This 177-nucleotide RNA was probed chemically with 2A3 and DMS.
DMS adducts were read by reverse transcription with MarathonRT.
For 2A3, 11,926 sequencing reads were counted.
RNA sequence: GGGAACGACUCGAGUAGAGUCGAAAAAAGAUAUGGAGAGCUUCUCUAGCGUGGGCGAAGAACUUAGGAUAACUACUCGGAAACGAGUAGGAAACCUAAGGGAGCCUCGGGAGCUCUCCUAAGUCAACAUAUUACCAUAGUUCGCUAUGGUAAUAUGAAAAGAAACAACAACAACAAC
Reactivity to 2A3 in 0.01 (KOAc 150mM, MgCl2 10mM, bicine 150mM(pH8.5), 24C), signal-to-noise 3, nucleotides 027 to 126: a010a020g040a030u070a050u120g000g000a000g000a000g010c020u150u050c100u120c140u170a140g140c100g240u300g050g000g000c040g240a300a010g000a070a000c000u010u000a000g010g010a010u030a120a080c000u010a000c000u000c000g020g000a030a050a030c000g010a010g000u000a000g000g000a000a030a000c000c000u000a000a000g000g000g010a010g010c010c010u010c000g000g000g000a000g000c000u010c000u000c010c000u000a000a000g000u000c000a000a050
Reactivity to DMS in 0.01 (KOAc 150mM, MgCl2 10mM, bicine 150mM(pH8.5), 24C), signal-to-noise 5, nucleotides 027 to 126: a110a080g000a050u000a300u010g000g010a020g010a020g010c010u000u000c010u010c200u020a140g050c270g030u020g020g020g010c000g000a100a130g000a100a170c000u000u000a010g000g000a060u000a100a290c010u000a000c000u000c010g010g000a130a090a200c010g000a010g010u000a000g000g000a050a250a160c000c000u010a000a010g000g000g000a090g010c010c000u000c110g000g020g000a020g010c000u000c000u000c000c010u000a010a080g010u000c040a100a290